RNA sequence: GGGAACGACUCGAGUAGAGUCGAAAAAUGUGAUAUGGAUAGAGUGCCAGGCUUGUUGCCAAUGAUGACGCUCGGAAACGAGCGUUUGAGGCACCGAAAGCCGGUAAACUCUAUCCUAAGUCUGAAACAUCCAGGUGAGGUUCGCCUCACCUGGAUGAAAAGAAACAACAACAACAAC
Reactivity to DMS in 0.01 (KOAc 150mM, MgCl2 10mM, bicine 150mM(pH8.5), 24C), signal-to-noise 1, nucleotides 027 to 126: a110u000g000u000g030a020u010a300u010g000g000a000u020a010g010a020g020u000g010c060c040a200g070g020c010u000u010g010u000u000g020c000c000a230a150u010g000a100u010g000a090c000g020c000u000c010g010g020a130a120a230c000g000a000g020c000g010u000u000u020g010a100g000g030c030a020c300c150g000a130a050a030g010c020c010g010g000u010a070a110a080c020u020c000u000a020u000c000c000u000a000a130g000u000c000u000g040a200a060a200

The record gives the reactivity of an RNA of 177 nucleotides to DMS.
It was measured as part of the RMDB library TTRDES.
Conditions: 150 mM KOAc, 10 mM MgCl2 and 150 mM bicine (pH 8.5), 24 C.
For DMS, 893 sequencing reads were counted.
High DMS reactivity at an A or C suggests that its Watson-Crick edge is free.